[RMDB]
RNA sequence: GGGAACGACUCGAGUAGAGUCGAAAAACCCCAUGAUAUUAAGCCGGCAGACGCAUGUAUUUUAACCAGCUGCGUCUGUGACUAUGACUGGGAACAGUAACGCUGCUGAUGUGUGUAUGUUGGAGUUACCUUAGCAUAAGUUCGCUUAUGCUAAGGUAAAAGAAACAACAACAACAAC
Reactivity to DMS in 0.01 (KOAc 150mM, MgCl2 10mM, bicine 150mM(pH8.5), 24C), signal-to-noise 1, nucleotides 027 to 126: a090c070c000c000c130a130u010g000a140u000a100u020u000a100a150g000c000c050g010g000c010a020g000a020c020g020c020a000u010g040u000a040u000u000u010u000a090a140c300c030a120g030c020u000g000c040g020u000c000u000g010u000g010a160c020u010a010u000g010a140c290u000g030g000g000a120a030c010a020g000u000a040a030c030g000c010u000g020c030u000g000a110u010g000u030g000u000g020u010a020u000g010u000u000g000g000a040g000u000u000
Reactivity to 2A3 in 0.01 (KOAc 150mM, MgCl2 10mM, bicine 150mM(pH8.5), 24C), signal-to-noise 2, nucleotides 027 to 126: a020c050c000c010c000a090u230g040a070u060a100u300u200a060a090g030c000c020g000g000c030a030g000a010c010g010c020a010u000g040u190a180u070u300u040u100a060a040c010c030a010g000c000u040g000c000g000u030c000u000g000u000g000a000c010u030a040u180g140a110c190u160g000g000g030a000a010c000a000g040u000a000a010c000g010c010u030g000c000u010g020a090u040g100u000g010u000g010u000a040u070g030u020u020g000g020a060g020u030u010